[RMDB]
RNA sequence: GGGAACGACUCGAGUAGAGUCGAAAAGCAUGUUUAUGUGAACCUAAGAAUGAAUUUCAGUGACUGUAGAUUAGAAGGACUGAUUAUAGCAUAGGCUGCUUGGUGUUCACUUUAUUUGCAUCUGUGAGUUUCCAACAAGCCCUAAGUUUACUGACAAGGAUAAAUUAUGAUUCGUCAUAAUUUAUCCAAAAGAAACAACAACAACAAC
Reactivity to 2A3 in 0.01 (KOAc 150mM, MgCl2 10mM, bicine 150mM(pH8.5), 24C), signal-to-noise 5, nucleotides 027 to 156: g030c010a000u100g020u050u130u080a080u120g000u010g000a010a020c010c020u030a070a020g050a060a180u160g030a060a110u070u040u020c010a020g020u040g180a170c030u060g070u190a050g060a290u160u100a070g070a190a030g030g020a020c010u000g020a010u050u070a070u090a080g030c030a050u040a110g110g020c030u040g000c000u020u010g020g000u070g010u040u000c000a000c000u030u080u060a110u060u090u120g030c000a060u010c050u030g030u010g030a040g030u040u130u030c020c000a010a010c040a050a040g040c000c000c030u070a120a040g020u020u010u080a190c020u040g050a020c040a060a080
Reactivity to DMS in 0.01 (KOAc 150mM, MgCl2 10mM, bicine 150mM(pH8.5), 24C), signal-to-noise 3, nucleotides 027 to 156: g010c040a060u010g030u000u000u000a030u020g040u010g000a050a080c050c040u000a060a070g010a120a140u010g010a090a110u010u000u020c030a070g020u010g020a100c040u010g000u000a120g010a150u000u000a110g020a090a070g020g030a180c020u000g010a060u010u000a080u000a140g000c030a090u000a100g010g000c040u000g000c050u010u010g010g020u010g030u000u000c040a030c040u000u000u000a070u020u000u010g000c000a110u000c070u000g010u010g010a100g000u000u010u000c020c020a070a080c080a070a120g020c010c010c010u000a050a150g010u000u000u000a090c050u000g000a110c070a110a270
The record gives the reactivity of an RNA of 207 nucleotides to 2A3 and DMS. For 2A3, 3,400 sequencing reads were counted. The reactions ran in a buffer of 150 mM KOAc, 10 mM MgCl2 and 150 mM bicine (pH 8.5), at 24 C. 2A3 adducts were read by reverse transcription with SuperScript II with manganese.